Record summary: Conditions: 150 mM KOAc, 10 mM MgCl2 and 150 mM bicine (pH 8.5), 24 C. Structure probing data (DMS) for a 177-nucleotide construct. For DMS the reverse transcriptase was MarathonRT. It was measured as part of the RMDB library M2PK90. Reactivities are rounded to 0.1 and cut off at 0 and 3.
RNA sequence: GGGAACGACUCGAGUAGAGUCGAAAAUGAAAGCUGUGUGAGCGAGGCGGGCGGAGGAUCAGGCCGUGCCCGGGCUCUGGCUGCAGCCGCCCGGGGACACGCCGUGCACCCUCGGGCUCCGGAAAAACGAAACUCAGAGUUUCGACUCUGAGUUUCGAAAAGAAACAACAACAACAAC
Reactivity to DMS in 0.01 (KOAc 150mM, MgCl2 10mM, bicine 150mM(pH8.5), 24C), signal-to-noise 1, nucleotides 027 to 126: u010g010a110a100a070g030c030u000g020u010g020u000g010a060g030c040g040a100g030g000c080g000g010g040c040g010g010a050g010g010a050u000c080a050g000g010c020c080g020u000g000c000c000c010g000g000g000c040u000c150u020g010g020c060u000g040c180a100g010c020c100g000c000c000c000g000g010g000g000a040c000a030c130g000c030c030g000u000g020c150a060c040c010c020u000c020g000g040g020c000u000c010c030g010g000a030a030a070a080a130